Chemical mapping of a 177-nucleotide RNA with 2A3 and DMS. 2A3 adducts were read by reverse transcription with SuperScript II with manganese. Reactivities are given for positions 27 through 126. For DMS, 1,839 sequencing reads were counted.
RNA sequence: GGGAACGACUCGAGUAGAGUCGAAAAUUACUCGUUGCGGAAGUAGCGCCAGAGGGUGACAGGGUCAUUUUAGAUACCGUGUUACUCCUUCUUAAUAAAGGGCAUACUAUCCAGCGUCUGCUAUGCCCUCGCAAGGAGAGUUCGCUCUCCUUGCGAGAAAAGAAACAACAACAACAAC
Reactivity to 2A3 in 0.01 (KOAc 150mM, MgCl2 10mM, bicine 150mM(pH8.5), 24C), signal-to-noise 2, nucleotides 027 to 126: u060u010a040c010u000c020g040u010u110g100c070g060g000a080a020g010u010a030g090c000g000c110c010a010g010a010g010g010g000u010g000a010c000a000g010g080g000u010c030a090u120u250u070u100a080g040a130u080a190c000c130g090u020g020u040u010a000c000u130c000c040u100u040c020u010u230a190a180u070a100a130a040g010g020g000c000a010u000a030c000u060a210u120c030c030a020g000c010g060u020c010u030g000c000u050a050u120g010c000c000
Reactivity to DMS in 0.01 (KOAc 150mM, MgCl2 10mM, bicine 150mM(pH8.5), 24C), signal-to-noise 2, nucleotides 027 to 126: u000u010a080c020u000c020g010u010u000g030c050g020g020a100a030g020u000a000g040c150g050c030c060a120g000a050g000g000g010u000g000a010c000a110g000g000g000u030c150a130u000u000u010u000a130g000a050u000a030c010c000g000u000g010u000u000a010c020u020c000c010u000u000c060u000u000a060a100u020a080a090a100g000g000g000c000a060u000a000c040u000a100u000c030c040a090g000c020g010u000c100u000g020c100u000a030u000g000c010c010